[RMDB]
RNA sequence: GGGAACGACUCGAGUAGAGUCGAAAAGUUCAAUAAUCCAGCGUUGCGGUAAUACUUCAAAUUUAUGAAGCUCAUUGCGUUUAGCCACCUGCACGGUGGCUUUUAAAUUAGUGUAAACGUCAGCUGCGUAAAUCCAAAGAUUCGUCUUUGGAUUUACAAAAGAAACAACAACAACAAC
Reactivity to DMS in 0.01 (KOAc 150mM, MgCl2 10mM, bicine 150mM(pH8.5), 24C), signal-to-noise 6, nucleotides 027 to 126: g010u010u010c070a080a120u010a100a130u000c080c030a120g010c040g010u000u010g010c040g000g000u000a080a070u000a090c020u010u010c060a040a130a130u000u010u000a070u010g010a040a060g000c090u010c160a050u010u000g020c060g010u000u000u010a050g010c000c000a010c000c000u010g030c270a130c210g020g020u000g000g010c000u000u010u000u000a010a050a060u010u000a070g020u010g010u000a020a070a060c030g010u000c140a070g010c040u000g010c140
Reactivity to 2A3 in 0.01 (KOAc 150mM, MgCl2 10mM, bicine 150mM(pH8.5), 24C), signal-to-noise 2, nucleotides 027 to 126: g030u060u080c040a070a050u150a100a070u100c060c020a000g000c040g100u160u140g010c020g050g000u040a030a020u030a090c020u050u090c030a090a110a170u140u150u090a140u150g010a020a030g000c020u010c090a080u010u120g010c010g000u090u150u030a000g000c000c020a010c000c000u200g020c110a040c100g000g010u000g000g050c030u000u000u000u020a010a010a000u030u010a020g020u030g000u030a050a120a010c000g020u000c060a030g000c010u040g000c010